[RMDB]
The data come from the RNA Mapping Database (RMDB), library M2PK50. Chemical mapping of a 177-nucleotide RNA with DMS and 2A3.

RNA sequence: GGGAACGACUCGAGUAGAGUCGAAAAUACUCACAUUUCGAUGUGAGUAACUGUCUAGUCGCUAGCGCCGAUCAAGGGCUAGCGACUAGACUUUAUUGAUCGCCAGCUAACCUUUCGAGGUUAGCAAACAUAGUCUUAGUUUCGACUAAGACUAUGUAAAAGAAACAACAACAACAAC
Reactivity to DMS in 0.01 (KOAc 150mM, MgCl2 10mM, bicine 150mM(pH8.5), 24C), signal-to-noise 9, nucleotides 027 to 126: u000a010c000u000c000a010c000a010u000u010u010c160g010a030u000g010u000g000a010g010u000a020a050c070u000g000u010c000u000a010g000u000c000g010c000u000a000g000c010g020c010c010g010a170u010c290a180a140g000g010g010c000u000a000g000c000g000a000c000u000a000g000a000c000u000u000u000a060u010u010g010a090u000c090g000c060c040a150g010c000u000a010a010c000c000u000u000u010c180g010a020g010g000u000u000a000g010c010a020a040
Reactivity to 2A3 in 0.01 (KOAc 150mM, MgCl2 10mM, bicine 150mM(pH8.5), 24C), signal-to-noise 2, nucleotides 027 to 126: u030a000c000u020c000a010c000a000u060u110u100c240g130a000u000g000u000g010a000g000u010a020a010c020u020g000u000c000u000a000g010u000c000g020c010u020a010g010c300g200c140c010g110a220u200c160a170a140g000g040g000c000u040a000g000c000g020a000c000u000a000g000a000c000u010u000u000a010u000u020g040a010u090c010g010c100c020a020g000c010u000a000a000c010c000u010u120u180c200g100a020g000g000u000u000a000g000c010a000a000